[RMDB]
An RNA of 177 nucleotides, treated with 2A3 and DMS and read out base by base. DMS (dimethyl sulfate) methylates the pairing face of unpaired adenines and cytosines. Conditions: 150 mM KOAc, 10 mM MgCl2 and 150 mM bicine (pH 8.5), 24 C. Reactivities are given for positions 27 through 126.
RNA sequence: GGGAACGACUCGAGUAGAGUCGAAAACCGGGACUCUUCGGAGUCCCGGAAAACGCUCACGGCAGAGCGAAGCAAAGGCAUGGCACGGCCGAGUGCCACGGAAAAUCAGAUAGUUCGCUAUCUGAAAUCUUACACUAGGGUUCGCCCUAGUGUAAGAAAAAGAAACAACAACAACAAC
Reactivity to 2A3 in 0.01 (KOAc 150mM, MgCl2 10mM, bicine 150mM(pH8.5), 24C), signal-to-noise 1, nucleotides 027 to 126: c000c000g000g000g000a010c020u040c050u160u140c300g070g000a000g030u000c010c000c010g000g000a000a040a010a000c010g020c000u000c030a100c080g300g000c140a040g030a030g030c010g050a050a000g080c100a140a140a160g130g040c050a060u080g030g000c000a000c030g070g020c110c020g040a020g010u010g050c010c000a010c000g010g110a000a110a040a110u000c000a000g020a020u000a000g030u050u040c270g000c100u000a000u000c000u010g010a030a000a000
Reactivity to DMS in 0.01 (KOAc 150mM, MgCl2 10mM, bicine 150mM(pH8.5), 24C), signal-to-noise 1, nucleotides 027 to 126: c020c000g010g000g000a020c000u000c020u000u010c190g030g000a010g060u000c000c000c010g010g000a000a010a090a140c030g040c020u000c030a080c110g050g030c050a090g000a030g000c020g000a100a100g030c150a110a030a090g020g000c030a070u000g010g050c000a010c030g000g000c080c100g010a230g010u010g000c010c010a000c090g030g000a060a060a090a120u000c010a030g000a000u000a000g010u000u020c200g040c010u000a020u000c010u000g010a010a090a100